This 177-nucleotide RNA was probed chemically with DMS and 2A3. It was measured as part of the RMDB library TTRDES. The RNA was probed in 150 mM KOAc, 10 mM MgCl2 and 150 mM bicine (pH 8.5) at 24 C.
RNA sequence: GGGAACGACUCGAGUAGAGUCGAAAAAAAGAUAUGGAGUUGUCUCUAGCGUGACUGAUGACCUGUGGGUCGCAUGUCGGAAACGACAUGUCAACCACAGCAAGGUUCGGGCAACUCCUAAGUCAAACUUCGAUAGAAACUUCGGUUUCUAUCGAAGAAAAGAAACAACAACAACAAC
Reactivity to DMS in 0.01 (KOAc 150mM, MgCl2 10mM, bicine 150mM(pH8.5), 24C), signal-to-noise 2, nucleotides 027 to 126: a050a060a020g030a050u000a300u000g000g000a050g000u000u000g000u020c000u010c160u020a300g060c270g000u060g000a070c020u000g020a110u000g030a060c300c030u000g020u000g000g010g000u000c300g000c000a000u000g000u000c000g100g000a110a060a130c000g010a000c000a030u000g000u000c040a300a300c000c000a000c050a000g000c030a120a030g040g000u000u000c070g080g000g000c000a050a020c000u010c000c010u000a000a130g000u000c000a150a120a190
Reactivity to 2A3 in 0.01 (KOAc 150mM, MgCl2 10mM, bicine 150mM(pH8.5), 24C), signal-to-noise 1, nucleotides 027 to 126: a010a060a020g100a100u140a110u150g000g000a010g010u020u020g060u040c070u070c120u300a120g210c100g210u240g060a020c040u050g120a300u100g010a080c010c000u010g000u000g000g040g010u130c020g000c000a000u000g000u000c050g000g050a100a120a030c030g000a000c000a010u020g000u040c030a020a000c010c010a000c000a000g000c000a080a060g000g000u000u060c070g040g000g010c010a000a000c020u020c000c020u000a070a000g050u000c000a050a060a030